[RMDB]
RNA sequence: GGGAACGACUCGAGUAGAGUCGAAAAGACUACGUAGAAGGCUGUAUCUGACUUCGAGAGCUGUAUUUUUCAUUUAACAAUGUCAAAUUGAUACUUGGCAAGUCAGGAAUACUUGGCACGUAGAGAAGAUAAUGUGGAAUUUCGAUUUUACAUUAUCAAAAGAAACAACAACAACAAC
Reactivity to DMS in 0.01 (KOAc 150mM, MgCl2 10mM, bicine 150mM(pH8.5), 24C), signal-to-noise 9, nucleotides 027 to 126: g000a180c000u000a010c010g010u000a080g010a160a050g010g010c150u020g030u010a050u020c010u000g000a010c000u000u000c030g010a160g000a030g010c150u010g010u020a020u000u000u000u000u000c010a010u000u000u010a130a140c280a040a010u000g000u000c030a010a010a010u000u010g000a120u040a080c010u000u000g000g020c160a010a010g010u000c010a020g000g010a080a060u010a040c010u010u010g000g020c180a020c010g000u010a010g000a170g010a110a080
Reactivity to 2A3 in 0.01 (KOAc 150mM, MgCl2 10mM, bicine 150mM(pH8.5), 24C), signal-to-noise 9, nucleotides 027 to 126: g020a020c010u000a000c010g030u060a050g070a300a040g190g030c050u040g010u030a040u020c000u000g000a000c000u000u020c050g070a070g010a010g030c110u100g040u210a030u000u010u000u000u020c010a020u010u030u080a160a100c120a050a010u010g010u030c020a000a010a040u040u100g050a030u070a180c000u030u020g070g010c160a010a010g000u000c000a000g010g070a100a020u020a030c020u100u130g060g000c020a000c010g000u000a000g010a010g020a130a010

The record gives the reactivity of an RNA of 177 nucleotides to DMS and 2A3.
For 2A3 the reverse transcriptase was SuperScript II with manganese.
For DMS the reverse transcriptase was MarathonRT.
The RNA was probed in 150 mM KOAc, 10 mM MgCl2 and 150 mM bicine (pH 8.5) at 24 C.